[RMDB]
RNA sequence: GGGAACGACUCGAGUAGAGUCGAAAAAUACCAUAUCAAGAGUAUUCAUCCGGUUGUGUAACCAGAAAUAUAAUGGAAUAAUGUAGGUAUUAUCACAUUAUUAAAGCUUUGAUAUGCUCAAGUAACUAUGGUAAUACAGCAAUAAUAAUUACUAUUGCCUUUAUCGGACGUUCGCGUCCGAUAAAGGAAAAGAAACAACAACAACAAC
Reactivity to 2A3 in 0.01 (KOAc 150mM, MgCl2 10mM, bicine 150mM(pH8.5), 24C), signal-to-noise 1, nucleotides 027 to 156: a010u080a040c000c040a030u010a030u190c050a060a180g070a050g040u050a010u050u130c160a200u110c110c040g050g000u000u030g010u010g070u160a050a000c010c000a030g130a000a240a000u100a000u030a110a090u040g010g030a030a080u010a110a000u030g050u250a150g120g050u080a070u040u030a010u040c000a010c000a040u000u030a010u060u100a010a080a080g040c080u090u140u030g080a030u120a030u160g010c000u050c030a130a000g080u000a040a010c010u000a010u000g000g010u000a010a070u090a010c010a010g070c010a090a010u070a040a010u160a070a090u190u080a050c040u010a050u060u130g000